RNA sequence: GGGAACGACUCGAGUAGAGUCGAAAACCUCCCUUCGGGGAGGAAAAAAGCGUACUACAAAUCCUUUUGACGGACAGCAAUGUGGAGUCCCAAAUAGGACGAUGAAACAUUGGUCCGAUAAGGAUUUGUAUCGCAAAAAUCGCGGUUCGCCGCGAAACGUCUAUUACCUCUUCGGAGGUAAUAGACGAAAAGAAACAACAACAACAAC
Reactivity to 2A3 in 0.01 (KOAc 150mM, MgCl2 10mM, bicine 150mM(pH8.5), 24C), signal-to-noise 2, nucleotides 027 to 156: c000c000u000c000c000c030u010u040c120g050g010g000g000a030g020g000a150a050a000a000a000a000g070c090g020u110a080c050u020a020c040a000a010a000u010c000c000u040u070u050u190g240a080c030g000g000a000c030a040g080c000a070a000u010g000u010g020g020a040g010u030c010c010c000a180a300a140u260a100g010g000a020c040g270a300u080g000a000a030a000c010a030u000u000g000g020u020c000c000g020a020u010a040a000g020g000a000u010u000u020g000u000a000u020c000g000c000a050a060a020a030a000u030c000g010c020g000g010u060u080c180g030c110c000g020c050g030a000a080a000